[RMDB]
RNA sequence: GGGAACGACUCGAGUAGAGUCGAAAACCAUGCCGAGCAGCCCAACGUUAGGGGCACGAAAGGUGCACCGAGUAAUAGGUUCACCAUGGUGGCUAACGAUAGAACUUUCGCGUUGGUCGGAAGAGCAGCGGUAUAGUGCGAAGGUUAUACUGAUGGACUUCUAAUUUUCGUUCGCGAAAAUUAGAAGAAAAGAAACAACAACAACAAC
Reactivity to 2A3 in 0.01 (KOAc 150mM, MgCl2 10mM, bicine 150mM(pH8.5), 24C), signal-to-noise 6, nucleotides 027 to 156: c010c000a030u070g030c020c040g060a050g020c060a020g010c020c000c020a060a040c030g010u030u050a030g010g020g050g050c030a020c010g150a120a080a030g020g000u010g010c060a010c000c000g000a020g080u150a120a160u090a190g010g000u010u010c000a000c000c040a020u060g070g020u020g030g030c010u020a030a000c020g030a030u070a150g110a050a030c010u030u060u030c050g010c010g040u060u040g090g040u110c020g010g020a070a030g000a020g030c050a010g040c000g000g020u070a040u060a120g090u080g030c040g020a050a010g050g010u040u050a060u040a100c060u050g060a110u100g060g040a030
Reactivity to DMS in 0.01 (KOAc 150mM, MgCl2 10mM, bicine 150mM(pH8.5), 24C), signal-to-noise 1, nucleotides 027 to 156: c000c000a070u000g030c040c030g020a140g030c050a130g010c010c020c010a060a140c050g000u000u000a080g040g030g000g000c030a010c040g000a110a140a090g030g000u000g000c070a020c010c010g000a170g020u010a100a120u000a090g030g030u010u000c020a000c020c010a040u000g000g010u000g020g000c020u000a090a080c020g000a110u000a030g000a060a060c070u000u000u020c080g000c020g020u010u000g020g000u000c030g020g030a040a060g000a070g010c020a080g040c020g050g030u000a030u000a040g020u000g000c020g000a110a120g010g000u000u020a070u000a040c000u000g000a070u010g020g010a240
Conditions: 150 mM KOAc, 10 mM MgCl2 and 150 mM bicine (pH 8.5), 24 C.
This 207-nucleotide RNA was probed chemically with 2A3 and DMS.
For 2A3, 4,482 sequencing reads were counted.
The data come from the RNA Mapping Database (RMDB), library RSTRND.
For 2A3 the reverse transcriptase was SuperScript II with manganese.